RNA sequence: GGGAACGACUCGAGUAGAGUCGAAAAAAAAAGAUAUGGAGAAGAACUACAAGGACCGAUAGCAAUGAUGUCUCGUCGGAAACGACGAGAUUGAGCUAUUUAGUACUUGCUUCUCCUAAGUCAAAAACUAAAAGCAUAUGUUCGCAUAUGCUUUUAGAAAAGAAACAACAACAACAAC
Reactivity to 2A3 in 0.01 (KOAc 150mM, MgCl2 10mM, bicine 150mM(pH8.5), 24C), signal-to-noise 1, nucleotides 027 to 126: a040a020a010a010a040g090a040u120a050u090g000g030a040g010a010a000g000a080a060c100u170a060c300a020a020g040g010a010c040c000g030a030u010a000g000c070a150a300u170g010a030u040g020u010c000u000c000g000u000c000g000g000a060a080a020c000g000a010c000g000a010g010a000u000u000g000a000g030c000u000a020u000u030u050a000g020u010a020c010u000u000g030c010u010u000c000u090c000c000u000a020a000g000u000c000a100a010a020a040a100
Reactivity to DMS in 0.01 (KOAc 150mM, MgCl2 10mM, bicine 150mM(pH8.5), 24C), signal-to-noise 3, nucleotides 027 to 126: a030a050a040a130a090g000a020u000a300u010g000g000a010g000a020a010g000a100a050c040u040a300c010a020a010g000g000a070c300c180g000a010u000a000g020c000a240a130u000g000a070u010g000u000c000u010c000g000u000c000g000g000a060a050a100c020g020a010c000g000a000g000a000u000u000g000a060g010c000u000a010u000u000u000a040g010u000a090c000u000u000g000c000u000u000c000u000c000c010u000a010a070g010u020c010a070a060a080a090a170